This 207-nucleotide RNA was probed chemically with 2A3.
2A3 is a SHAPE reagent: it acylates the 2'-hydroxyl of flexible nucleotides of all four kinds.
RNA sequence: GGGAACGACUCGAGUAGAGUCGAAAAACAAAUGAAAACAAACUUUGUGCCAAAUUGGGAGAAGGACUUACAUUCAAUUCCAACAACAUUUGCAUUAAUGACAAUAUUAACACCCUAUGGACAGGAGUUAACCCCACCAGAGCCAACUGUCAAAUAACGUCAUAGGCAUGUUCGCAUGCCUAUGACGAAAAGAAACAACAACAACAAC
Reactivity to 2A3 in 0.01 (KOAc 150mM, MgCl2 10mM, bicine 150mM(pH8.5), 24C), signal-to-noise 1, nucleotides 027 to 156: a000c050a000a090a000u100g010a000a060a020a080c120a010a100a000c090u210u080u040g070u060g040c060c040a120a090a250u120u120g030g010g060a100g000a050a090g090g000a010c010u070u060a050c170a030u020u010c010a000a150u030u120c010c040a050a050c030a060a070c070a240u010u040u050g040c000a000u000u030a030a060u160g010a060c000a080a040u080a030u220u030a050a000c000a060c040c010c070u040a030u050g030g080a030c030a050g000g050a080g000u080u130a120a120c020c040c000c000a010c030c030a050g020a000g250c030c000a010a010c070u010g000u050c000a020a140a030u090a090a000